An RNA of 177 nucleotides, treated with DMS and 2A3 and read out base by base. DMS adducts were read by reverse transcription with MarathonRT. For 2A3, 5,331 sequencing reads were counted. For 2A3 the reverse transcriptase was SuperScript II with manganese. The data come from the RNA Mapping Database (RMDB), library M2PK50.
[RMDB]
RNA sequence: GGGAACGACUCGAGUAGAGUCGAAAAGACGGAUUCUUCGGAAUCCGUCAAAGUGACGGUGAAAAAUGGCCAAUGCGCCAGGUACCACCGACACAGGGCGCAAAACUGGAGUGUUCGCACUCCAGAAGUUUACAGUGAACUUCGGUUCACUGUAAACAAAAGAAACAACAACAACAAC
Reactivity to DMS in 0.01 (KOAc 150mM, MgCl2 10mM, bicine 150mM(pH8.5), 24C), signal-to-noise 4, nucleotides 027 to 126: g000a020c000g010g000a010u000u000c000u000u010c210g030g010a010a010u000c000c000g030u000c000a010a010a060g020u000g010a110c020g000g000u000g010a010a040a030a190a100u000g000g010c000c010a140a110u010g010c180g010c000c000a010g010g000u010a240c160c000a010c000c000g010a070c010a000c010a180g020g000g000c090g040c090a050a040a090a150c010u000g000g000a020g010u000g010u020u010c190g050c030a010c000u000c000c000a010g010a040a040
Reactivity to 2A3 in 0.01 (KOAc 150mM, MgCl2 10mM, bicine 150mM(pH8.5), 24C), signal-to-noise 2, nucleotides 027 to 126: g000a000c000g000g000a000u010u010c010u040u060c170g060g000a010a000u000c010c000g010u010c000a000a010a000g000u000g020a010c000g000g010u000g030a030a020a010a030a020u030g010g000c010c090a190a300u250g050c150g000c070c000a010g030g000u040a090c010c010a000c000c000g000a000c000a000c010a000g080g110g000c120g000c060a030a060a070a060c020u000g020g000a010g010u010g040u090u170c250g030c090a000c000u020c000c000a000g000a000a010